[RMDB]
RNA sequence: GGGAACGACUCGAGUAGAGUCGAAAAGGCCGACGCCGACGUGGUGACGUUCGAGGACGCGGCCGAGGGCGGGGGCCGGCAGUUCUACCUGCGCGGGUCCGCGAUCCAGUCCACCGACACGGCCGCAGACGAGAAAUUGUUUCGACAAUUUCUCGUCAAAAGAAACAACAACAACAAC
Reactivity to DMS in 0.01 (KOAc 150mM, MgCl2 10mM, bicine 150mM(pH8.5), 24C), signal-to-noise 8, nucleotides 027 to 126: g020g010c030c020g010a090c070g010c020c000g000a080c160g010u010g020g010u000g010a070c040g000u010u000c050g020a170g010g010a100c070g010c010g010g010c000c020g010a070g000g010g020c020g010g000g010g000g010c000c000g000g000c010a010g000u010u010c190u010a100c300c010u000g010c020g010c020g000g000g010u000c010c010g010c020g000a060u010c010c050a150g000u000c020c040a170c100c080g000a090c090a250c040g010g010c010c010g020c060a080
Reactivity to 2A3 in 0.01 (KOAc 150mM, MgCl2 10mM, bicine 150mM(pH8.5), 24C), signal-to-noise 7, nucleotides 027 to 126: g030g020c010c010g030a070c040g010c030c010g040a140c070g140u150g030g070u060g050a020c020g020u040u070c050g060a080g070g020a030c070g000c000g010g000c000c000g010a110g010g040g010c000g030g060g000g010g010c000c000g000g000c000a010g000u170u100c050u150a190c070c010u050g000c300g040c050g180g020g040u020c010c010g110c010g020a040u040c010c000a000g000u000c010c030a070c050c040g020a020c010a010c050g020g020c050c000g010c010a020